[RMDB]
RNA sequence: GGGAACGACUCGAGUAGAGUCGAAAACACUUGGAGUUCGCUCCAAGUGAAACCAUAGCCGAUUGGCAAUAAUACCGCAGGCGGUAAAGCGGAACAAAUAAGAAAGCGAAGACUUCGGUCUUCGCAACUACAUUUUUAUGUUCGCAUAAAAAUGUAGAAAAGAAACAACAACAACAAC
Reactivity to 2A3 in 0.01 (KOAc 150mM, MgCl2 10mM, bicine 150mM(pH8.5), 24C), signal-to-noise 6, nucleotides 027 to 126: c010a000c000u000u000g000g010a020g010u060u070c120g110c100u000c000c000a000a000g000u000g000a040a000a000c010c000a080u110a040g020c010c030g300a300u150u290g050g010c010a010a050u170a080a030u070a050c010c010g000c030a050g090g040c090g000g020u080a110a060a000g010c020g010g010a080a050c050a090a150a080u240a130a080g130a180a080a010g010c000g000a000a000g000a000c000u020u090c260g030g000u000c000u000u000c000g000c000a000a000
Reactivity to DMS in 0.01 (KOAc 150mM, MgCl2 10mM, bicine 150mM(pH8.5), 24C), signal-to-noise 5, nucleotides 027 to 126: c000a010c000u000u010g000g010a010g030u000u010c220g030c000u010c000c000a000a010g010u000g000a040a080a160c010c010a120u010a110g020c000c010g020a150u010u010g020g030c030a130a070u010a120a070u010a110c040c020g000c020a080g020g010c050g000g010u000a030a090a070g010c020g000g010a150a100c140a050a120a080u010a070a090g000a120a110a110g010c000g010a010a000g000a020c000u000u020c180g030g000u000c000u000u000c000g010c000a010a040
Chemical mapping of a 177-nucleotide RNA with 2A3 and DMS. For DMS, 5,359 sequencing reads were counted. DMS adducts were read by reverse transcription with MarathonRT. The RNA was probed in 150 mM KOAc, 10 mM MgCl2 and 150 mM bicine (pH 8.5) at 24 C. Values cover nucleotides 27 to 126.